The data come from the RNA Mapping Database (RMDB), library 15KREP. Chemical mapping of a 177-nucleotide RNA with 2A3 and DMS. For 2A3, 878 sequencing reads were counted. Conditions: 150 mM KOAc, 10 mM MgCl2 and 150 mM bicine (pH 8.5), 24 C. 2A3 adducts were read by reverse transcription with SuperScript II with manganese. DMS adducts were read by reverse transcription with MarathonRT.
RNA sequence: GGGAACGACUCGAGUAGAGUCGAAAAGCACAUUGCCUCCUCUAACGCUUUUCUUGAUUUGAGGACAUCAUGUUUUAGUGUCGCUGCACUUACAACUGGUUUGACUUUUCAAACUGUGCGGCCUGGCGCGAAUAACGUGGUUCGCCACGUUAUUCGCAAAAGAAACAACAACAACAAC
Reactivity to 2A3 in 0.01 (KOAc 150mM, MgCl2 10mM, bicine 150mM(pH8.5), 24C), signal-to-noise 1, nucleotides 027 to 126: g000c030a000c000a060u020u050g000c010c020u020c030c010u010c020u020a060a030c040g070c060u020u100u210u000c030u060u210g110a190u050u040u030g000a010g060g010a050c000a020u000c020a020u120g100u000u050u050u050a050g010u020g010u000c060g040c300u120g000c010a010c000u030u120a040c050a150a060c000u020g080g040u010u030u010g050a060c090u150u130u060u040c010a020a000a000c010u010g000u000g020c000g000g000c000c010u060g010g070c030
Reactivity to DMS in 0.01 (KOAc 150mM, MgCl2 10mM, bicine 150mM(pH8.5), 24C), signal-to-noise 1, nucleotides 027 to 126: g000c000a030c030a090u000u000g000c150c090u000c030c000u010c020u010a060a080c100g000c140u000u000u000u000c110u000u000g010a140u000u000u000g000a090g000g010a060c040a020u000c030a020u000g000u000u000u000u000a030g050u010g010u000c150g000c140u000g010c010a010c020u000u000a050c210a060a030c100u000g000g000u000u000u000g000a090c300u000u010u000u000c010a000a000a000c000u000g030u000g010c030g020g010c010c020u000g000g020c110